[RMDB]
RNA sequence: GGGAACGACUCGAGUAGAGUCGAAAAGAUAUGGAUUGGGCUAUUUCGAAUACACAUCGGAAACGAUGUGAAUAUUGUAGCCAAUCCUAAGUCAAAAUCAGGUCCCUUGUUCGCAAGGGACCUGAAAGACUAACAAGAAGUUCGCUUCUUGUUAGUCAAAAGAAACAACAACAACAAC
Reactivity to DMS in 0.01 (KOAc 150mM, MgCl2 10mM, bicine 150mM(pH8.5), 24C), signal-to-noise 5, nucleotides 027 to 126: g000a010u000a040u010g000g000a010u000u000g020g010g010c000u000a000u000u000u020c300g020a130a040u000a140c000a010c010a010u000c000g010g010a020a000a050c000g010a020u000g000u000g000a090a080u000a060u010u000g030u000a010g000c000c000a010a010u000c000c000u000a000a110g000u010c000a130a070a130a200u000c010a010g000g000u000c010c000c000u000u000g010u000u020c240g030c010a010a020g000g000g000a000c010c000u000g000a010a040a110
Reactivity to 2A3 in 0.01 (KOAc 150mM, MgCl2 10mM, bicine 150mM(pH8.5), 24C), signal-to-noise 4, nucleotides 027 to 126: g020a000u020a000u040g020g000a000u010u050g300g170g070c020u020a040u090u300u300c120g110a010a000u020a030c010a000c000a010u000c000g000g000a020a010a000c000g000a000u000g010u010g000a010a010u130a040u030u260g010u010a000g000c010c000a000a000u000c010c000u000a010a000g010u000c020a000a010a010a300u090c000a000g040g000u000c000c000c000u000u000g030u040u070c270g000c090a000a000g000g000g000a000c000c000u000g000a000a000a010